The record gives the reactivity of an RNA of 177 nucleotides to 2A3 and DMS.
For 2A3 the reverse transcriptase was SuperScript II with manganese.
Values are in units of 0.01, from 0 to 300, in steps of 10.
For 2A3, 1,845 sequencing reads were counted.

RNA sequence: GGGAACGACUCGAGUAGAGUCGAAAAGAAAGGCGCGCCUGACAUCUAAAUCGCCUGUUGGCAGGAGUUGCCGCGAGGCCCUCUUCCGUCGAGAUCCUGGGAGACGAUCGCGGUCAGCCCACAGAAAGGGUAUACAAAACUUCGGUUUUGUAUACCCAAAAGAAACAACAACAACAAC
Reactivity to 2A3 in 0.01 (KOAc 150mM, MgCl2 10mM, bicine 150mM(pH8.5), 24C), signal-to-noise 3, nucleotides 027 to 126: g030a020a030a010g040g000c020g010c000g030c020c000u070g050a040c020a050u030c020u100a070a100a040u140c040g020c050c000u020g050u060u050g040g020c050a050g020g090a090g060u150u100g060c000c020g000c000g030a020g020g020c040c020c000u010c000u060u030c020c050g070u080c030g040a030g040a190u100c050c040u100g000g000g000a030g000a000c040g050a040u030c010g000c010g020g010u020c020a030g030c010c010c050a070c000a020g090a060a080a010
Reactivity to DMS in 0.01 (KOAc 150mM, MgCl2 10mM, bicine 150mM(pH8.5), 24C), signal-to-noise 4, nucleotides 027 to 126: g000a050a070a080g030g010c010g000c130g020c020c020u000g000a050c070a090u030c060u020a040a100a180u020c050g010c000c020u000g000u020u010g000g000c190a060g010g000a130g040u000u000g030c000c000g010c060g010a050g000g000c080c110c060u000c000u020u000c020c010g000u020c130g020a090g000a060u010c040c070u040g000g000g000a030g000a010c210g000a130u000c030g020c030g010g000u000c070a060g030c030c000c030a080c150a050g020a050a140a070